[RMDB]
RNA sequence: GGGAACGACUCGAGUAGAGUCGAAAAGAGACACCACAGUCUGCACACCUGUGGACACAGCUGGGGUGCACACCAGCCCUGGGGACAGGGAACCUGGGCUUGAUACCAGCUCAACCGCAGUGAGCUGGCCUCAUGUGAUAUUCGUAUCACAUGAGGCAAAAGAAACAACAACAACAAC
Reactivity to DMS in 0.01 (KOAc 150mM, MgCl2 10mM, bicine 150mM(pH8.5), 24C), signal-to-noise 9, nucleotides 027 to 126: g000a170g010a150c050a080c020c030a060c060a050g000u010c030u000g010c080a100c100a140c140c070u010g010u000g000g000a120c170a150c190a040g000c010u000g000g000g010g010u000g010c080a070c140a120c070c030a040g010c010c010c000u000g010g010g010g000a170c040a050g000g010g010a140a090c190c020u000g000g010g000c070u010u000g000a130u010a210c070c000a010g000c000u000c010a040a140c030c070g000c100a070g010u000g000a030g010c010u000g000
Reactivity to 2A3 in 0.01 (KOAc 150mM, MgCl2 10mM, bicine 150mM(pH8.5), 24C), signal-to-noise 8, nucleotides 027 to 126: g060a000g020a020c010a010c060c010a010c010a030g050u060c050u090g020c060a040c010a030c050c050u050g010u060g060g020a040c040a000c010a110g000c010u010g000g000g040g040u080g020c060a020c010a040c080c010a010g010c000c000c010u040g000g010g030g030a040c030a120g060g030g030a010a020c010c010u020g000g000g020c040u020u070g030a020u070a130c010c000a010g000c000u000c010a050a080c040c040g030c050a030g030u010g040a010g000c020u020g070
The data come from the RNA Mapping Database (RMDB), library OK2TST. This 177-nucleotide RNA was probed chemically with DMS and 2A3. Values cover nucleotides 27 to 126. Conditions: 150 mM KOAc, 10 mM MgCl2 and 150 mM bicine (pH 8.5), 24 C.